[RMDB]
RNA sequence: GGGAACGACUCGAGUAGAGUCGAAAAGACGAACUACUACUUUGGAACGCGCUUGGCCGUCGCCCAGCAGACGUUUACUACAUUUGGAACAACAUCUGGAAGCCGACCAAGAAAGAAGAGUCCGAUAUUGGCAAGGUGGUUGCGGACACCAUCAAGGCGCGCAUUCCUAAUUCGUUAGGAAUGCGCGAAAAGAAACAACAACAACAAC
Reactivity to 2A3 in 0.01 (KOAc 150mM, MgCl2 10mM, bicine 150mM(pH8.5), 24C), signal-to-noise 1, nucleotides 027 to 156: g090a000c060g110a060a060c000u250a020c000u010a010c000u190u010u140g010g000a120a000c000g010c000g000c020u010u010g050g000c050c000g060u030c050g000c000c000c000a000g040c020a030g050a090c070g000u020u040u010a100c040u060a010c010a210u230u080u300g040g000a070a000c010a000a000c000a080u000c000u000g010g000a040a010g000c070c000g020a040c000c010a020a020g000a020a080a000g150a110a000g010a000g160u040c040c000g090a030u060a160u160u300g050g000c020a090a160g050g000u000g020g000u040u060g010c020g000g020a030c000a000c080c010a010u010c020a050a140g030g010